[RMDB]
RNA sequence: GGGAACGACUCGAGUAGAGUCGAAAACAUAAUGGGUAGUAGAGUAAAGGCUGUCUCGGUCUCUACUAUCUAUUUCACGCACUACAUGUAGACUAGACUGAGAUAGCCUUUAUCUACAUGUGGUGUAGGAACUCUAUGUAUUCGUACAUGGAGUUCCAAAAGAAACAACAACAACAAC
Reactivity to 2A3 in 0.01 (KOAc 150mM, MgCl2 10mM, bicine 150mM(pH8.5), 24C), signal-to-noise 8, nucleotides 027 to 126: c020a030u180a050a050u090g030g000g010u010a020g000u000a000g010a010g020u040a000a010a000g010g000c010u020g030u050c000u000c020g020g010u020c000u000c000u000a010c000u010a010u020c000u010a010u010u100u070c050a040c090g050c010a010c020u050a010c000a030u020g000u000a000g010a020c050u030a020g000a010c020u020g010a010g030a100u090a020g000c000c000u010u010u010a020u000c000u000a000c000a000u010g010u010g020g000u010g010u010a020
Reactivity to DMS in 0.01 (KOAc 150mM, MgCl2 10mM, bicine 150mM(pH8.5), 24C), signal-to-noise 8, nucleotides 027 to 126: c050a080u030a060a060u020g010g010g020u020a090g000u000a010g010a050g020u020a010a010a020g010g000c010u000g010u000c010u000c000g000g000u000c000u000c030u010a010c020u010a080u030c120u010a020u000u020u020c130a090c190g020c100a100c100u010a070c150a070u010g010u000a000g000a190c300u040a060g000a010c010u000g000a000g000a030u010a010g000c000c000u000u000u000a010u000c000u000a010c010a050u010g000u000g010g010u000g000u010a100

An RNA of 177 nucleotides, treated with 2A3 and DMS and read out base by base. The DMS profile rests on 27,319 reads. Source: RMDB library OK1LIB, as collected in RNAgym. Conditions: 150 mM KOAc, 10 mM MgCl2 and 150 mM bicine (pH 8.5), 24 C. DMS (dimethyl sulfate) methylates the pairing face of unpaired adenines and cytosines.